RNA sequence: GGGAACGACUCGAGUAGAGUCGAAAAGCCCCGAUGGAGUUACCGAUGAGCACCGGUGAGAAGAGACUGUCUCGCAGACUAGAAGUCUCUUCUUUUCUGCUUUGAGACUUCUUCUCCGUAGGACUCUUCGGCUCUUCGCGGGUACCCAGCAACCUGCGUUAGUGUUUCGGUUCGCCGAAACACUAACAAAAGAAACAACAACAACAAC
Reactivity to 2A3 in 0.01 (KOAc 150mM, MgCl2 10mM, bicine 150mM(pH8.5), 24C), signal-to-noise 1, nucleotides 027 to 156: g020c030c030c020c000g060a090u260g080g030a020g000u090u170a050c000c000g000a000u000g000a010g050c140a240c230c020g030g070u300g030a020g000a000a000g020a000g050a080c180u120g020u000c000u000c010g030c010a020g010a000c000u010a000g010a040a010g300u130c070u010c000u190u010c000u020u010u000u000c000u000g000c000u180u150u140g000a000g000a020c000u060u010c000u010u000c000u000c000c010g000u060a050g010g000a000c000u000c000u020u000c000g000g020c000u020c000u000u030c000g020c180g000g020g000u070a140c010c010c010a000g090c040a010a130c000c070u110g010c030
The record gives the reactivity of an RNA of 207 nucleotides to 2A3. The data come from the RNA Mapping Database (RMDB), library VIROID. Values cover nucleotides 27 to 156.